[RMDB]
RNA sequence: GGGAACGACUCGAGUAGAGUCGAAAAGUAAAGCGCGAGGGCUGGUGAGGAUUUGGAGGCGUGAGAGAGAUUGUAGGGAUCCAGCCUCCUCCCUCUCCGCGCGGCGCCUCCUAGCCGAUAUAAAAAAGUGUAAUGACCUAUUCGUAGGUCAUUACACAAAAGAAACAACAACAACAAC
Reactivity to DMS in 0.01 (KOAc 150mM, MgCl2 10mM, bicine 150mM(pH8.5), 24C), signal-to-noise 2, nucleotides 027 to 126: g030u010a050a110a140g020c020g030c020g020a140g020g000g030c030u010g000g000u000g010a050g000g000a060u000u010u000g020g000a030g010g000c030g020u000g000a130g000a060g010a100g000a090u010u010g030u010a090g030g000g000a110u000c020c080a100g000c000c000u000c010c010u000c110c060c000u000c010u000c000c010g020c040g030c070g000g000c050g010c010c000u010c020c000u010a070g000c080c060g000a080u010a080u020a000a060a060a060a030a140
Reactivity to 2A3 in 0.01 (KOAc 150mM, MgCl2 10mM, bicine 150mM(pH8.5), 24C), signal-to-noise 2, nucleotides 027 to 126: g020u030a000a110a040g070c040g020c020g040a210g060g100g000c060u100g000g080u130g030a020g060g010a070u270u120u130g020g020a030g040g000c030g010u140g020a150g020a000g000a000g020a100u030u220g110u190a110g060g100g000a020u030c020c000a000g020c040c000u010c000c000u010c000c000c000u000c000u000c000c020g040c030g000c020g040g000c000g010c000c000u000c010c000u010a010g000c020c010g060a040u090a050u150a230a080a020a010a010a010